[RMDB]
RNA sequence: GGGAACGACUCGAGUAGAGUCGAAAAAUUCAGUGAAACAACAUUGAUGAGACUCUUUUGACUUAAAUCAUAAUCUAUGAUGUUAUAUGGAUCUUGGUCAUCUCUUUCAUAUUGAUUCAAAUCCAUGACAUGUUUGGAGGUUCGCCUCCAAACAUGUAAAAGAAACAACAACAACAAC
Reactivity to 2A3 in 0.01 (KOAc 150mM, MgCl2 10mM, bicine 150mM(pH8.5), 24C), signal-to-noise 2, nucleotides 027 to 126: a010u090u060c020a000g030u000g060a210a140a190c050a090a000c010a030u050u060g000a010u060g020a010g020a070c020u130c000u070u030u060u100g030a020c050u140u140a220a130a000u030c000a010u060a100a030u050c080u260a030u120g030a020u050g060u170u120a240u010a020u190g000g030a010u020c100u070u020g000g060u030c010a060u040c090u030c000u030u300u030c070a060u110a110u130u090g010a050u120u110c000a020a010a010u000c010c000a010u030g000
Reactivity to DMS in 0.01 (KOAc 150mM, MgCl2 10mM, bicine 150mM(pH8.5), 24C), signal-to-noise 2, nucleotides 027 to 126: a110u020u010c030a050g020u010g010a090a100a100c170a140a080c060a030u000u000g020a020u000g000a130g000a060c070u000c060u020u000u010u000g010a050c080u000u000a030a050a090u000c070a000u000a050a130u000c090u020a080u000g000a010u000g010u010u000a110u010a050u020g020g000a020u000c130u000u000g000g000u000c020a020u000c140u000c170u000u010u000c070a040u000a060u000u000g000a070u000u010c070a020a040a050u000c050c020a050u000g000
An RNA of 177 nucleotides, treated with 2A3 and DMS and read out base by base. The reactions ran in a buffer of 150 mM KOAc, 10 mM MgCl2 and 150 mM bicine (pH 8.5), at 24 C. High DMS reactivity at an A or C suggests that its Watson-Crick edge is free.